Record summary:
Conditions: 150 mM KOAc, 10 mM MgCl2 and 150 mM bicine (pH 8.5), 24 C. Structure probing data (2A3 and DMS) for a 177-nucleotide construct. DMS adducts were read by reverse transcription with MarathonRT.

[RMDB]
RNA sequence: GGGAACGACUCGAGUAGAGUCGAAAACUUCGGACGGGCGGCUCUGCCCCGCCGUCCCCGUGUUCGUCCACGAGUUCGUCUCGUCCGAGCCAAUGCGCCUCCACCGAGAUAACGUCAUGCUGGCCUCCCAGGUGACACUUUUCGAAGUGUCACCUGGAAAAGAAACAACAACAACAAC
Reactivity to 2A3 in 0.01 (KOAc 150mM, MgCl2 10mM, bicine 150mM(pH8.5), 24C), signal-to-noise 2, nucleotides 027 to 126: c020u080u070c010g000g020a000c040g040g010g020c040g000g020c000u000c030u160g050c020c020c000c020g000c000c010g030u020c000c000c000c020g060u060g050u010u090c050g020u040c020c000a030c060g020a030g030u190u290c050g060u040c080u050c070g000u000c010c020g020a010g000c000c010a080a080u130g010c000g020c000c000u000c040c010a040c010c020g070a080g000a080u110a090a020c000g060u040c030a050u080g030c010u020g040g050c000c000u010c000
Reactivity to DMS in 0.01 (KOAc 150mM, MgCl2 10mM, bicine 150mM(pH8.5), 24C), signal-to-noise 1, nucleotides 027 to 126: c060u010u000c030g030g000a110c000g000g000g020c060g050g020c020u050c070u020g040c050c040c030c060g000c010c020g000u000c000c000c090c130g010u010g030u000u000c100g000u000c000c030a040c110g000a010g020u060u000c030g010u080c000u050c030g000u000c000c000g050a030g020c000c050a070a010u000g000c140g040c010c010u020c050c020a000c060c010g030a220g020a060u060a090a060c060g010u010c000a060u070g000c020u000g010g020c010c000u000c020